[RMDB]
RNA sequence: GGGAACGACUCGAGUAGAGUCGAAAAAAGCAAUGAAAAAUAUCAUGCCUGUUCUUGAAGUUAAAGCACGUCGUGUUGGAGGUUCAAACUAUCAAGUACCCGUUGAAGUUCGUCCUGAACGUCGAAACAGGGAGGAUCAGUUCGCUGAUCCUCCCUGAAAAGAAACAACAACAACAAC
Reactivity to DMS in 0.01 (KOAc 150mM, MgCl2 10mM, bicine 150mM(pH8.5), 24C), signal-to-noise 1, nucleotides 027 to 126: a030a180g030c140a050a010u000g000a000a090a180a110a080u000a130u000c020a070u000g010c020c010u010g020u000u000c080u000u000g000a040a070g040u010u010a030a130a100g090c100a050c100g020u020c110g040u020g010u010u000g000g000a070g000g000u000u010c050a050a000a060c040u000a150u000c050a020a030g040u000a130c020c030c010g050u010u010g020a140a060g000u020u000c030g010u010c070c090u000g000a100a070c160g000u000c010g000a070a050a120